[RMDB]
Annotation: The data come from the RNA Mapping Database (RMDB), library M2PK50. Structure probing data (2A3 and DMS) for a 177-nucleotide construct. DMS (dimethyl sulfate) methylates the pairing face of unpaired adenines and cytosines. The RNA was probed in 150 mM KOAc, 10 mM MgCl2 and 150 mM bicine (pH 8.5) at 24 C. The 2A3 profile rests on 3,086 reads.
RNA sequence: GGGAACGACUCGAGUAGAGUCGAAAAUCACACGAGUUCGCUCGUGUGAAAAUAAUAGUCGCUAGAAAACGAUCAAAACUAGCGACAAACAUAACGAUCGAAAAACGCCUGGCUUCGGCCAGGCGAAGUAUAAUAAUACGUUCGCGUAUUAUUAUACAAAAGAAACAACAACAACAAC
Reactivity to 2A3 in 0.01 (KOAc 150mM, MgCl2 10mM, bicine 150mM(pH8.5), 24C), signal-to-noise 1, nucleotides 027 to 126: u000c000a020c000a000c000g000a000g020u080u060c110g060c040u000c000g000u000g000u000g000a010a000a000a000u000a000a000u030a020g010u010c000g000c000u000a010g010a060a090a060a070c030g010a020u030c020a010a040a020a080c000u000a000g010c030g010a000c000a010a060a000c020a020u130a040a050c040g020a010u060c020g020a090a010a000a000a050c030g020c010c000u010g000g000c040u060u020c250g090g000c010c000a000g000g010c020g000a000a000
Reactivity to DMS in 0.01 (KOAc 150mM, MgCl2 10mM, bicine 150mM(pH8.5), 24C), signal-to-noise 2, nucleotides 027 to 126: u000c000a010c000a000c010g010a000g000u000u010c210g040c000u000c000g040u000g000u000g000a010a020a070a140u020a090a060u010a130g010u000c000g010c000u000a010g000a060a020a040a090c030g030a010u000c020a120a090a100a100c000u010a010g010c010g020a000c000a020a100a100c150a050u010a080a090c090g010a010u000c010g000a130a050a100a170a190c030g000c000c030u000g020g000c000u000u010c120g050g010c000c000a010g010g010c000g010a000a010